The record gives the reactivity of an RNA of 177 nucleotides to DMS and 2A3. Source: RMDB library TTRDEL, as collected in RNAgym. The RNA was probed in 150 mM KOAc, 10 mM MgCl2 and 150 mM bicine (pH 8.5) at 24 C. The DMS profile rests on 4,601 reads.
[RMDB]
RNA sequence: GGGAACGACUCGAGUAGAGUCGAAAAGAUAUGGAAUCUGUAAUUCAGCCAGUGAUAUCGGAAACGAUGUUUGCUGGAACUACUGACCACAGAUUCCUAAGUCAAAAUCAGCGCUUCGGCGCUGAAACGAUUAUCUAGUGUUCGCACUAGAUAAUCGAAAAGAAACAACAACAACAAC
Reactivity to DMS in 0.01 (KOAc 150mM, MgCl2 10mM, bicine 150mM(pH8.5), 24C), signal-to-noise 5, nucleotides 027 to 126: g000a050u000a300u000g000g000a000a000u000c000u000g010u010a200a280u000u000c000a010g000c000c010a010g010u010g010a010u000a000u010c000g000g010a130a130a190c010g010a020u000g030u000u010u010g020c000u000g000g000a040a010c030u010a300c000u000g000a030c300c230a060c010a000g000a010u000u000c000c000u000a030a080g000u000c020a070a040a120a170u010c000a000g010c000g000c000u000u000c190g040g010c000g000c010u000g000a000a040a130
Reactivity to 2A3 in 0.01 (KOAc 150mM, MgCl2 10mM, bicine 150mM(pH8.5), 24C), signal-to-noise 3, nucleotides 027 to 126: g030a010u070a020u160g010g010a000a000u010c010u010g030u040a060a120u120u030c000a010g010c020c000a000g000u010g020a000u000a010u020c000g010g030a070a040a040c010g010a010u010g080u040u070u300g030c000u010g000g040a010a000c010u170a030c000u010g000a010c000c040a010c030a000g000a000u000u000c000c000u000a110a020g040u000c010a010a020a050a290u030c000a010g000c000g020c040u070u110c270g160g000c000g000c000u010g000a000a010a010